RNA sequence: GGGAACGACUCGAGUAGAGUCGAAAAGAAUACUCAGACAAAGCCCAGACUUUGGAGAGCGCCACAUUGCAUUAUUCCUUAAAUCCCAAUGGGUGAAGAAAAAUGAGAAAAUCGGCGCAGUCAACGAUGAUUAUAGGACCUUCGGGUCCUAUAAUCAAAAAGAAACAACAACAACAAC
Reactivity to DMS in 0.01 (KOAc 150mM, MgCl2 10mM, bicine 150mM(pH8.5), 24C), signal-to-noise 2, nucleotides 027 to 126: g030a160a070u010a050c070u000c060a050g030a300c080a020a070a150g000c000c060c120a160g010a100c060u000u000u000g010g000a200g020a100g000c040g020c010c010a080c070a130u010u000g000c030a020u000u000a070u010u020c000c010u010u010a190a060a090u010c000c000c010a160a070u010g000g050g010u000g000a040a070g000a000a030a020a020a020u000g010a080g010a080a050a030a140u010c130g000g040c010g020c010a110g000u010c080a060a080c200g020a160
Record summary:
The data come from the RNA Mapping Database (RMDB), library OK2TRN. The record gives the reactivity of an RNA of 177 nucleotides to DMS. DMS adducts were read by reverse transcription with MarathonRT. For DMS, 849 sequencing reads were counted. Conditions: 150 mM KOAc, 10 mM MgCl2 and 150 mM bicine (pH 8.5), 24 C.